An RNA of 170 nucleotides, treated with 2A3 and DMS and read out base by base. For 2A3, 30,848 sequencing reads were counted. The reactions ran in a buffer of 150 mM KOAc, 10 mM MgCl2 and 150 mM bicine (pH 8.5), at 24 C. DMS adducts were read by reverse transcription with MarathonRT.
RNA sequence: GGGAACGACUCGAGUAGAGUCGAAAAUUCCGCCUCCCCGGGGAGCCGAGUGAGGCUUAUCCCGGAGUGCCGGGCAAGUCCCCCCAUGCCCGUUCCACGGCUCCCUUCCAGAAGGGCGGGGGUGGCCACCCAAGAUUCUUCGGAAUCUUGAAAAGAAACAACAACAACAAC
Reactivity to 2A3 in 0.01 (KOAc 150mM, MgCl2 10mM, bicine 150mM(pH8.5), 24C), signal-to-noise 9, nucleotides 027 to 129: u050u010c000c000g000c000c000u010c000c000c000c000g000g000g000g000a010g000c010c000g050a090g130u270g080a100g030g000c010u010u030a110u110c000c000c000g010g000a020g010u050g090c060c010g000g000g000c020a020a030g300u270c000c000c000c000c000c000a010u040g000c020c000c000g010u100u030c020c010a030c000g020g000c010u040c010c000c000u040u030c060c020a160g020a190a060g070g010g000c050g000g010g000g000g000u030g010g010c020c020a030c020c010
Reactivity to DMS in 0.01 (KOAc 150mM, MgCl2 10mM, bicine 150mM(pH8.5), 24C), signal-to-noise 9, nucleotides 027 to 129: u030u030c030c020g020c010c000u020c010c030c020c050g000g040g010g010a000g000c020c000g010a180g040u090g030a160g020g020c010u010u020a070u030c030c010c020g010g000a100g020u000g030c230c030g030g000g020c200a020a060g040u070c000c020c010c030c010c020a210u010g020c010c000c020g000u030u030c070c040a190c020g020g020c010u030c000c000c000u030u030c100c100a150g030a060a090g020g010g010c100g010g010g000g000g010u040g000g010c190c100a090c060c010